[RMDB]
RNA sequence: GGGAACGACUCGAGUAGAGUCGAAAAGACUAGUUCGCUAGUCGACACUCCUAAGUCAUACCGACCGAAGAACUCGAUUGUCAGCGAUUCGGAAACGAAUCGCUUGGAUUUAUCGAGGGAGGCGGUAUGAUAUGGAAACACUCGUCUUCGGACGAAAGCUUAACGGGCAAUUCGUUGCCCGUUAAGCAAAAGAAACAACAACAACAAC
Reactivity to 2A3 in 0.01 (KOAc 150mM, MgCl2 10mM, bicine 150mM(pH8.5), 24C), signal-to-noise 2, nucleotides 027 to 156: g000a010c000u010a000g010u080u130c230g010c100u000a010g000u000c010g040a020c010a090c040u040c000c000u060a210a040g000u000c000a000u000a000c010c030g270a260c060c000g260a300a080g010a040a000c000u020c000g000a000u010u010g060u020c000a000g000c000g000a020u000u020c000g020g000a100a060a020c000g000a000a020u000c000g000c000u020u030g000g000a000u000u090u300a030u000c000g000a000g000g000g020a000g010g010c000g000g000u000a000u000g000a010u000a040u010g010g040a050a060a000c040a090c130u060c000g050u020c020u050u050c230g060g000a010c010g000a030a000a000
An RNA of 207 nucleotides, treated with 2A3 and read out base by base. The reactions ran in a buffer of 150 mM KOAc, 10 mM MgCl2 and 150 mM bicine (pH 8.5), at 24 C.